[RMDB]
Notes: Structure probing data (DMS and 2A3) for a 177-nucleotide construct. The reactions ran in a buffer of 150 mM KOAc, 10 mM MgCl2 and 150 mM bicine (pH 8.5), at 24 C.

RNA sequence: GGGAACGACUCGAGUAGAGUCGAAAAGACUUUCUGCGCCCUGUCGAGGACUCGGGGAUCAACGACCUGAAGCACUAUUACUUCAUGGCGGAUUUGGCCGAUGGGCAACCGCUAGGCCGGGCAAACCUCGGGUUCAUAAGUUCGCUUAUGAACCCGAAAAAGAAACAACAACAACAAC
Reactivity to DMS in 0.01 (KOAc 150mM, MgCl2 10mM, bicine 150mM(pH8.5), 24C), signal-to-noise 2, nucleotides 027 to 126: g000a140c110u000u020u000c050u030g020c130g000c040c030c000u000g040u000c020g000a070g000g020a070c020u000c020g000g010g000g000a080u010c110a100a140c010g000a070c000c050u020g030a020a010g030c210a080c300u010a110u130u030a050c010u000u000c000a030u000g000g020c000g000g000a060u010u020u010g020g030c040c020g000a150u030g020g000g040c120a040a040c060c000g030c020u020a090g020g000c000c010g060g020g020c120a020a130a020c140c070
Reactivity to 2A3 in 0.01 (KOAc 150mM, MgCl2 10mM, bicine 150mM(pH8.5), 24C), signal-to-noise 5, nucleotides 027 to 126: g040a020c040u100u090u050c050u080g010c040g000c010c000c000u010g050u050c060g030a100g010g060a100c050u010c040g040g000g040g030a090u070c060a080a080c030g230a240c020c000u010g020a010a010g040c070a010c150u210a150u230u260a050c020u060u050c010a090u180g020g000c020g060g030a110u010u050u080g110g040c010c000g120a120u110g040g010g040c050a070a080c010c000g000c040u090a020g000g010c000c020g000g010g000c040a020a040a030c020c010

The DMS profile rests on 2,521 reads. Values cover nucleotides 27 to 126. Source: RMDB library OK1LIB, as collected in RNAgym.